RNA sequence: GGGAACGACUCGAGUAGAGUCGAAAACUAUGCGGAUUCGUCCGCAUAGAAAAAACCGUAGGGACCUUUAGGGAGUUCUCAUUUCGAAAGAGAUGAGUGAACAUCGAUCUAACUGGGUCCCUAAACGGAAAAAGUACCGCUAUUCGUAGCGGUACAAACAGAAAUACAGUUUCGACUGUAUUUCUGUAAAAGAAACAACAACAACAAC
Reactivity to DMS in 0.01 (KOAc 150mM, MgCl2 10mM, bicine 150mM(pH8.5), 24C), signal-to-noise 2, nucleotides 027 to 156: c000u000a010u000g010c010g010g010a090u000u000c260g000u010c000c010g060c000a010u000a020g010a000a050a090a120a090a060c010c020g040u000a050g000g030g010a050c010c010u020u000u000a010g020g020g020a060g000u000u000c000u020c000a000u000u000u020c000g010a110a070a190g010a040g030a000u000g010a050g020u010g030a010a020c010a180u000c210g000a080u010c010u000a020a030c300u000g030g040g010u000c000c000c010u000a000a010a040c040g010g010a030a040a080a140a150g010u000a000c000c000g000c000u000a100u000u010c270g010u000a020g020c010g000g010u000a000c000a010a090
Reactivity to 2A3 in 0.01 (KOAc 150mM, MgCl2 10mM, bicine 150mM(pH8.5), 24C), signal-to-noise 2, nucleotides 027 to 156: c000u000a000u000g010c000g010g000a010u020u060c140g070u050c070c000g000c000a010u000a000g000a010a030a010a000a000a010c040c000g000u010a030g000g000g000a000c020c010u020u070u050a000g000g010g030a020g010u000u020c000u000c000a000u000u000u000c020g010a040a000a000g010a010g000a000u010g040a040g050u190g140a000a020c030a060u300c010g020a010u000c010u020a040a030c160u120g030g000g030u010c000c000c010u010a000a000a000c010g020g050a110a070a020a020a000g010u010a000c000c000g010c010u010a010u040u140c270g080u050a010g000c000g000g000u010a000c000a000a000
Chemical mapping of a 207-nucleotide RNA with DMS and 2A3. Source: RMDB library RNAMAK, as collected in RNAgym. Conditions: 150 mM KOAc, 10 mM MgCl2 and 150 mM bicine (pH 8.5), 24 C. Values are in units of 0.01, from 0 to 300, in steps of 10.